Chemical mapping of a 177-nucleotide RNA with DMS and 2A3. For 2A3, 1,349 sequencing reads were counted. It was measured as part of the RMDB library M2PK50. For DMS, 1,966 sequencing reads were counted. DMS adducts were read by reverse transcription with MarathonRT. As a SHAPE reagent, 2A3 marks flexible, mostly unpaired nucleotides at the ribose 2'-OH.
RNA sequence: GGGAACGACUCGAGUAGAGUCGAAAAGUGGAGGCCUUCGGGCCUCCACAAAUAAAUUCAGCGGUAAUUCGUCCGCAAAUAUUACCGCUGAUGCGCACGAAAAAAGACAGAACUUCGGUUCUGUCAAUCUUCUACUAAUCUUCGGAUUAGUAGAAGAAAAAGAAACAACAACAACAAC
Reactivity to DMS in 0.01 (KOAc 150mM, MgCl2 10mM, bicine 150mM(pH8.5), 24C), signal-to-noise 2, nucleotides 027 to 126: g010u000g000g000a020g010g020c010c000u010u000c170g030g040g070c010c000u000c010c000a000c000a020a060a080u010a060a070a080u010u000c000a010g010c000g010g000u000a010a010u010u000c180g000u000c110c050g010c060a060a050a060u010a060u000u000a010c000c020g000c000u000g000a000u000g000c110g000c140a080c140g000a000a020a080a100a070a120g000a020c010a010g000a010a000c020u000u000c150g020g000u000u000c000u000g000u000c000a000a040
Reactivity to 2A3 in 0.01 (KOAc 150mM, MgCl2 10mM, bicine 150mM(pH8.5), 24C), signal-to-noise 1, nucleotides 027 to 126: g000u020g030g010a010g000g040c020c070u090u110c300g170g000g000c030c000u000c000c000a000c020a010a010a010u010a000a000a020u030u000c000a000g000c020g000g000u000a000a000u000u140c100g120u090c100c160g130c090a000a140a000u140a000u010u010a000c010c010g000c000u000g010a000u030g000c110g000c000a040c100g000a110a080a000a100a000a000g010a000c000a000g000a000a000c000u080u050c170g070g000u000u020c000u000g010u000c000a000a000